[RMDB]
RNA sequence: GGGAACGACUCGAGUAGAGUCGAAAAUUACCGGAUUGCCUCAGCCGCGAAAACUGGUAACUUGGUUUCGGAAAUUUGACGGGAUUUGUCUAAGCCUACUGCCGCAAGACUUUCAAUCUUUAAACUACCUGAGAGUGUAGUUCGCUACACUCUCAGGAAAAGAAACAACAACAACAAC
Reactivity to DMS in 0.01 (KOAc 150mM, MgCl2 10mM, bicine 150mM(pH8.5), 24C), signal-to-noise 1, nucleotides 027 to 126: u000u030a150c010c040g020g000a100u000u020g000c030c030u000c120a090g020c010c120g090c040g000a050a020a070a090c080u010g020g020u000a090a110c120u000u010g000g000u030u020u010c080g010g010a040a070a140u000u000u010g000a050c020g020g010g000a060u020u010u010g020u000c020u010a090a100g000c040c040u010a060c100u000g000c030c040g030c070a030a060g020a070c070u000u000u010c050a080a030u010c060u000u010u000a070a070a100c180u000a150
Source information: This 177-nucleotide RNA was probed chemically with DMS. The DMS profile rests on 861 reads.